[RMDB]
RNA sequence: GGGAACGACUCGAGUAGAGUCGAAAAGCGAAGCUUCGGCUUCGCAAAAAGAUAUGGACGUGUGGUGUGGGAGACGCAAUGUGUCGGAAACGACAUGACGUCGAGGAUCACACGUAACAUCACGUCCUAAGUCAAAAAAGCUUGCUUCGGCAAGCAAGGGUUAAAUUACUUUCGAGUAAUUUAACCCAAAAGAAACAACAACAACAAC
Reactivity to DMS in 0.01 (KOAc 150mM, MgCl2 10mM, bicine 150mM(pH8.5), 24C), signal-to-noise 2, nucleotides 027 to 156: g020c020g000a020a000g020c000u010u000c300g050g040c010u000u000c000g000c010a020a040a050a060a070g020a120u000a140u000g000g010a010c020g040u000g030u000g040g010u010g020u000g010g000g000a200g000a020c000g000c030a110a100u000g050u000g020u000c010g020g010a110a100a170c010g020a020c010a010u000g020a060c010g020u000c010g000a100g020g020a110u000c000a010c020a010c020g020u000a060a070c080a070u040c000a020c000g000u000c000c000u010a020a090g010u010c020a000a070a140a160a060a120g000c000u000u010g010c020u010u000c300g060g000c000a030a020g020c010a030a020
Reactivity to 2A3 in 0.01 (KOAc 150mM, MgCl2 10mM, bicine 150mM(pH8.5), 24C), signal-to-noise 5, nucleotides 027 to 156: g000c000g010a000a000g010c030u090u130c250g080g000c000u020u000c010g030c020a010a020a000a000a000g020a010u010a010u060g000g000a000c010g000u010g020u060g110g020u000g010u010g010g010g000a030g000a010c000g000c020a060a090u130g040u020g010u080c000g010g020a020a020a040c000g000a000c000a010u060g110a090c010g000u000c000g010a170g020g010a010u010c000a000c000a000c000g010u010a010a030c020a080u220c000a000c000g000u010c000c000u020a040a010g020u030c030a030a010a020a030a300a000g000c000u080u100g000c000u030u070c180g100g000c000a000a010g000c010a010a090